The record gives the reactivity of an RNA of 177 nucleotides to 2A3 and DMS. The data come from the RNA Mapping Database (RMDB), library OK2TST. The DMS profile rests on 1,440 reads. Conditions: 150 mM KOAc, 10 mM MgCl2 and 150 mM bicine (pH 8.5), 24 C.
RNA sequence: GGGAACGACUCGAGUAGAGUCGAAAAAUGCUACGCCCCGUGCUGCCCGGUGACCGCGAGCGGACCGUGCACGGACACAUCCAGUUCUCCGGCGAGACGCUGUAUCGACGGUUCAUGUCGGCUCGUGGGACAUCCGAAUGUUCGCAUUCGGAUGUCCAAAAGAAACAACAACAACAAC
Reactivity to 2A3 in 0.01 (KOAc 150mM, MgCl2 10mM, bicine 150mM(pH8.5), 24C), signal-to-noise 1, nucleotides 027 to 126: a000u060g000c010u020a060c060g040c000c000c000c000g020u040g000c030u000g020c000c000c060g000g070u050g040a090c010c000g020c030g010a000g040c000g020g010a030c030c040g020u050g000c000a020c140g060g000a000c020a010c000a040u030c050c030a030g030u080u010c050u050c020c040g090g000c060g030a040g010a020c040g040c140u050g020u050a100u070c030g080a100c000g160g000u120u080c050a050u120g100u060c040g090g000c000u000c020g060u110g000
Reactivity to DMS in 0.01 (KOAc 150mM, MgCl2 10mM, bicine 150mM(pH8.5), 24C), signal-to-noise 2, nucleotides 027 to 126: a080u020g020c060u000a040c120g010c060c010c050c040g000u010g020c040u010g010c070c080c030g010g010u000g020a150c040c030g000c030g020a040g030c040g030g010a050c030c150g040u000g010c090a050c050g020g000a130c140a110c150a070u010c110c050a110g010u020u000c010u000c020c050g030g010c130g010a050g010a060c080g000c090u000g000u010a070u000c040g000a070c100g000g000u000u000c070a110u000g020u000c020g000g000c000u000c000g010u000g000